The data come from the RNA Mapping Database (RMDB), library OK2TRN. An RNA of 177 nucleotides, treated with 2A3 and DMS and read out base by base. Values cover nucleotides 27 to 126. The reactions ran in a buffer of 150 mM KOAc, 10 mM MgCl2 and 150 mM bicine (pH 8.5), at 24 C. The 2A3 profile rests on 1,179 reads.

RNA sequence: GGGAACGACUCGAGUAGAGUCGAAAAAAAUUCAUUCAUUCAGUGGAUAGAUUUGAGUGUCUGUUUGGUGCCAUCAAGGCUUCUAAGGCCCUGGACAUACAUAGUACCAGCAAUAAGAGGGAUUAAGACUCUGUCUUAGGUUCGCCUAAGACAGAGUAAAAGAAACAACAACAACAAC
Reactivity to 2A3 in 0.01 (KOAc 150mM, MgCl2 10mM, bicine 150mM(pH8.5), 24C), signal-to-noise 2, nucleotides 027 to 126: a000a000a000u070u050c020a010u030u000c000a000u090u000c040a020g100u060g060g030a030u030a200g110a030u110u070u060g090a090g020u020g000u000c040u010g080u100u100u090g030g010u030g000c030c000a010u090c070a090a080g020g000c000u170u010c040u120a100a060g020g010c010c010c000u020g000g030a010c000a030u070a030c000a020u110a040g010u040a090c010c010a030g040c040a040a010u060a170a040g090a090g030g050g010a000u150u100a060a000g040
Reactivity to DMS in 0.01 (KOAc 150mM, MgCl2 10mM, bicine 150mM(pH8.5), 24C), signal-to-noise 4, nucleotides 027 to 126: a040a020a020u010u000c020a030u000u000c050a070u000u010c130a120g030u000g000g010a040u000a070g010a050u000u000u000g010a150g010u000g010u000c040u000g010u000u030u000g010g000u000g020c020c020a080u020c090a080a080g010g010c060u000u010c110u000a080a110g010g000c010c030c040u000g010g010a040c040a050u000a060c090a050u000a090g020u000a110c030c020a080g010c090a060a040u010a040a070g000a060g020g010g000a130u010u000a070a100g000